[RMDB]
RNA sequence: GGGAACGACUCGAGUAGAGUCGAAAAACAUGGGUGUUCGCACCCAUGUAAAAAAGCGUACUACCAGUGGUGGUGGAGUGGAUCCCAAAUAGGAUCCCACGAUGAAACCACGUAACAUCUGGUAUCGCAAAAAGGUCUCGGUUUCGACCGAGACCAAUUCCAUUACACAAUUCGUUGUGUAAUGGAAAAAAGAAACAACAACAACAAC
Reactivity to DMS in 0.01 (KOAc 150mM, MgCl2 10mM, bicine 150mM(pH8.5), 24C), signal-to-noise 3, nucleotides 027 to 156: a040c000a020u020g000g020g030u000g010u000u000c300g060c030a060c010c000c000a010u000g010u000a000a050a080a100a070a110g010c000g030u000a070c090u000a030c000c000a040g030u010g020g010u000g000g010u010g010g000a100g030u000g000g020a120u000c000c000c010a010a160a220u010a060g000g000a050u000c090c020c000a020c000g000a120u010g000a130a160a090c000c000a010c010g030u000a050a090c110a060u010c010u000g010g010u000a060u000c020g030c040a040a040a060a130a120g010g010u000c000u010c000g020g020u000u000u000c300g010a050c010c000g000a020g010a000c000c000a000a010
Reactivity to 2A3 in 0.01 (KOAc 150mM, MgCl2 10mM, bicine 150mM(pH8.5), 24C), signal-to-noise 4, nucleotides 027 to 156: a000c020a010u020g010g000g000u040g030u100u110c230g030c040a000c000c050c000a000u010g000u010a030a010a000a000a000a000g010c020g010u090a070c060u010a000c030c000a000g000u010g000g030u010g000g000u020g010g030a010g000u030g000g010a010u010c010c040c040a100a260a110u260a090g010g000a000u050c160c210c010a000c010g110a190u050g010a010a000a000c000c000a010c000g010u030a010a040c010a190u140c010u000g000g000u020a040u170c010g000c000a020a020a020a020a060g000g000u020c000u000c000g020g030u060u090u110c240g070a040c000c000g000a000g000a000c000c000a000a000
Source: RMDB library RNAMAK, as collected in RNAgym. The record gives the reactivity of an RNA of 207 nucleotides to DMS and 2A3. The RNA was probed in 150 mM KOAc, 10 mM MgCl2 and 150 mM bicine (pH 8.5) at 24 C.